[RMDB]
RNA sequence: GGGAACGACUCGAGUAGAGUCGAAAAGGGGGUCCGCCGCCAGAAGCGCGUCGAGGACCGAGUCGCUGACCGCGUCACAGAUCUUGUCGGGAUGUCCUUCCGUCACCGACUCACUGGUAAAAAGGCGUGACCCUCGCGAUUUCGAUCGCGAGGGUCAAAAAGAAACAACAACAACAAC
Reactivity to 2A3 in 0.01 (KOAc 150mM, MgCl2 10mM, bicine 150mM(pH8.5), 24C), signal-to-noise 1, nucleotides 027 to 126: g000g040g030g000g000u010c000c000g030c030c000g090c000c000a000g000a000a100g060c060g060c050g140u040c000g090a070g020g060a000c000c040g000a040g000u060c100g010c160u060g140a050c060c000g000c010g070u140c020a020c020a120g070a050u090c010u080u130g000u070c060g040g000g000a160u160g120u110c020c000u150u050c020c000g010u030c050a090c110c020g000a060c000u040c000a080c000u030g000g000u020a020a020a020a020a020g010g080c000g120

About this RNA: This 177-nucleotide RNA was probed chemically with 2A3. For 2A3, 410 sequencing reads were counted. The reactions ran in a buffer of 150 mM KOAc, 10 mM MgCl2 and 150 mM bicine (pH 8.5), at 24 C. 2A3 adducts were read by reverse transcription with SuperScript II with manganese.